[RMDB]
RNA sequence: GGGAACGACUCGAGUAGAGUCGAAAAGGCAUCUUCAAAGUCAGACAUCACUGCGUCGUCGUGAUAAAGAAUGCCGUCAAUUGGCGCGCUAUAGGCCAUAUCGCGAUAGAUAUCGAUGAUGCGCUGCCCUAGGAAUCAUUUUCGAAUGAUUCCUAGGAAAAGAAACAACAACAACAAC
Reactivity to DMS in 0.01 (KOAc 150mM, MgCl2 10mM, bicine 150mM(pH8.5), 24C), signal-to-noise 9, nucleotides 027 to 126: g010g010c050a050u000c050u000u000c110a090a100a120g020u000c020a050g000a090c040a040u010c040a050c050u000g010c230g010u000c050g000u000c010g010u000g010a020u000a030a080a100g010a090a060u010g000c000c000g010u000c080a160a140u010u010g010g000c010g010c140g010c020u000a080u010a150g010g000c110c100a090u000a010u000c000g010c060g000a050u000a080g000a020u000a050u000c080g010a030u000g000a090u000g010c060g010c010u000g010c070
Reactivity to 2A3 in 0.01 (KOAc 150mM, MgCl2 10mM, bicine 150mM(pH8.5), 24C), signal-to-noise 9, nucleotides 027 to 126: g060g010c030a060u030c060u180u060c080a100a050a040g050u130c010a010g010a040c000a030u040c010a020c070u080g020c050g050u020c010g010u000c010g020u030g010a010u020a030a170a010g090a070a040u130g000c010c010g000u010c010a150a300u140u230g010g000c010g000c010g000c050u040a050u110a230g160g000c020c010a010u010a000u020c010g000c010g020a010u030a200g030a010u030a100u140c060g030a070u030g000a010u020g030c130g000c110u030g000c000
An RNA of 177 nucleotides, treated with DMS and 2A3 and read out base by base. Values cover nucleotides 27 to 126. High 2A3 reactivity points to a flexible backbone, as in loops and unpaired stretches. For 2A3 the reverse transcriptase was SuperScript II with manganese. The reactions ran in a buffer of 150 mM KOAc, 10 mM MgCl2 and 150 mM bicine (pH 8.5), at 24 C. Reactivities are rounded to 0.1 and cut off at 0 and 3. Source: RMDB library OK2TST, as collected in RNAgym. For 2A3, 35,386 sequencing reads were counted.